[RMDB]
RNA sequence: GGGAACGACUCGAGUAGAGUCGAAAAGACACAUGCUUGACAGUUAUUCUGUCAUGCUAUGUGGUGAUAAUUCUGCUAAGUUUUGGGAAGAGGCAUUCUAUAGAGAUCUCUAUAGUUCGCCUACCACGUAUCUAAGCCUUCGGGCUUAGAAAAAGAAACAACAACAACAAC
Reactivity to DMS in 0.01 (KOAc 150mM, MgCl2 10mM, bicine 150mM(pH8.5), 24C), signal-to-noise 4, nucleotides 027 to 129: g030a120c020a000c000a040u000g020c000u000u010g020a070c010a000g000u020u020a100u030u020c010u020g020u010c020a020u000g040c020u000a050u050g010u010g050g030u050g010a110u030a000a000u000u000c030u030g000c090u060a090a120g030u020u000u070u020g040g020g030a150a090g040a000g000g000c010a010u030u010c000u050a030u000a000g020a050g020a180u070c140u000c030u040a030u000a030g020u040u010c070g030c000c000u070a040c020c010a070c070g000u030a150
Reactivity to 2A3 in 0.01 (KOAc 150mM, MgCl2 10mM, bicine 150mM(pH8.5), 24C), signal-to-noise 6, nucleotides 027 to 129: g110a000c000a000c000a000u010g010c000u010u000g000a000c000a000g030u120u090a220u300u210c000u010g020u010c000a000u000g000c020u000a020u000g000u010g000g070u000g040a020u080a190a090u080u060c040u040g160c050u100a200a090g100u080u080u110u150g090g050g010a190a080g020a090g160g010c020a000u050u000c020u000a020u000a030g050a060g030a230u130c080u000c000u280a000u000a000g000u000u030c090g020c000c000u020a040c000c010a020c030g100u120a040
The record gives the reactivity of an RNA of 170 nucleotides to DMS and 2A3. DMS adducts were read by reverse transcription with MarathonRT. The reactions ran in a buffer of 150 mM KOAc, 10 mM MgCl2 and 150 mM bicine (pH 8.5), at 24 C. For 2A3, 8,468 sequencing reads were counted. The data come from the RNA Mapping Database (RMDB), library 15KLIB.